[RMDB]
RNA sequence: GGGAACGACUCGAGUAGAGUCGAAAAGAUAUGGAGCCAGAACUACGACAAAGAUGCUCGAAGAACCGGAAUCUUCGGAAACGAAGAUUCCGGGGAGAGCAGUUUGGGGUCGCUGGCUCCUAAGUCAGUAAUAUAAGCAGUUCGCUGCUUAUAUUACAAAAGAAACAACAACAACAAC
Reactivity to 2A3 in 0.01 (KOAc 150mM, MgCl2 10mM, bicine 150mM(pH8.5), 24C), signal-to-noise 2, nucleotides 027 to 126: g020a010u080a030u160g000g000a000g000c000c000a020g010a190a150c300u300a070c140g080a000c050a030a150a020g180a300u020g000c020u030c090g300a300a300g040a050a000c000c010g030g010a000a020u010c010u000u020c010g090g010a100a070a010c000g000a000a020g000a040u010u030c020c000g000g000g000g000a110g000a010g000c040a020g010u090u110u130g200g030g100g000u010c040g020c070u000g000g000c000u010c000c010u010a000a000g000u000c020a020
Reactivity to DMS in 0.01 (KOAc 150mM, MgCl2 10mM, bicine 150mM(pH8.5), 24C), signal-to-noise 2, nucleotides 027 to 126: g000a040u000a160u010g000g000a010g010c010c000a020g000a160a090c150u020a300c010g020a040c020a080a100a090g010a100u000g010c010u000c000g000a110a210g020a280a300c030c000g010g010a040a020u000c000u000u020c000g000g000a040a040a090c020g010a030a010g010a060u000u000c000c000g000g000g000g010a040g000a000g020c000a010g010u020u010u030g010g010g040g000u000c160g000c010u000g000g020c000u010c000c000u000a000a040g000u000c030a130
Source information
Source: RMDB library TTRINS, as collected in RNAgym. Structure probing data (2A3 and DMS) for a 177-nucleotide construct. The 2A3 profile rests on 1,896 reads. For DMS the reverse transcriptase was MarathonRT. The DMS profile rests on 1,655 reads. Reactivities are given for positions 27 through 126.